This 207-nucleotide RNA was probed chemically with 2A3. High 2A3 reactivity points to a flexible backbone, as in loops and unpaired stretches. The reactions ran in a buffer of 150 mM KOAc, 10 mM MgCl2 and 150 mM bicine (pH 8.5), at 24 C.
RNA sequence: GGGAACGACUCGAGUAGAGUCGAAAAUUGUGCUGGCUCAGGCCCCUUUCUUGCUCCAAAAGCAUGAGGGGCUCCCUGCCUUACUGACUUGCGGCGCUCCUCGAACUGGCUCUGUUUUGGUCGUGCAGUGUGGGGCUGGGGCCAGUGCCAGACACUGUCCACAUAACGAGUUCGCUCGUUAUGUGGAAAAAGAAACAACAACAACAAC
Reactivity to 2A3 in 0.01 (KOAc 150mM, MgCl2 10mM, bicine 150mM(pH8.5), 24C), signal-to-noise 1, nucleotides 027 to 156: u110u070g010u050g020c000u000g000g000c000u000c010a080g010g010c010c000c000c000u010u300u150c150u210u200g000c000u010c000c000a110a010a040a000g020c050a020u150g010a000g000g020g000g000c000u020c000c000c000u030g040c000c000u120u110a110c100u180g120a020c010u070u070g040c080g060g000c000g000c000u000c000c000u020c010g030a110a100c000u060g090g020c040u040c080u130g260u120u140u080u260g070g000u100c050g050u090g080c030a010g040u080g050u080g120g000g100g000c010u000g000g000g000g000c000c000a000g000u020g000c010c000a000g000a000c000a000c020u080g060